[RMDB]
RNA sequence: GGGAACGACUCGAGUAGAGUCGAAAAUACAUCGUCAUGCGAAAUUCAAUGAUCGCUAGGAUCCUACUGCGGAGCGAAUGUUUCGCGGUUUCGCACUCAGCGAUUAGCGAAGCACGCAGAACGGCUCGGUUUAAGAUAAUUUCGAUUAUCUUAAACCAAAAGAAACAACAACAACAAC
Reactivity to DMS in 0.01 (KOAc 150mM, MgCl2 10mM, bicine 150mM(pH8.5), 24C), signal-to-noise 9, nucleotides 027 to 126: u010a130c170a100u010c020g010u010c170a120u000g010c010g000a040a110a170u000u000c040a060a300u000g000a020u000c010g010c010u000a070g020g000a100u010c040c040u000a030c010u000g000c000g010g000a020g010c010g000a100a080u010g020u000u000u000c000g010c000g010g010u000u000u000c060g010c300a090c060u000c090a040g000c000g010a020u000u000a040g010c300g000a020a020g010c220a260c020g000c000a020g010a200a040c040g000g010c240u010c110
Reactivity to 2A3 in 0.01 (KOAc 150mM, MgCl2 10mM, bicine 150mM(pH8.5), 24C), signal-to-noise 9, nucleotides 027 to 126: u090a010c030a060u050c020g020u020c030a050u050g010c010g030a300a240a090u040u020c010a010a040u050g010a010u010c000g000c010u010a040g030g040a070u050c010c010u030a010c000u010g000c010g020g010a010g000c030g120a300a170u300g010u000u010u010c010g000c000g010g000u040u040u040c070g000c020a040c030u060c050a010g000c000g010a010u000u020a000g010c010g000a010a000g020c070a010c020g000c000a000g030a050a010c010g040g010c080u090c110
The record gives the reactivity of an RNA of 177 nucleotides to DMS and 2A3. Values cover nucleotides 27 to 126.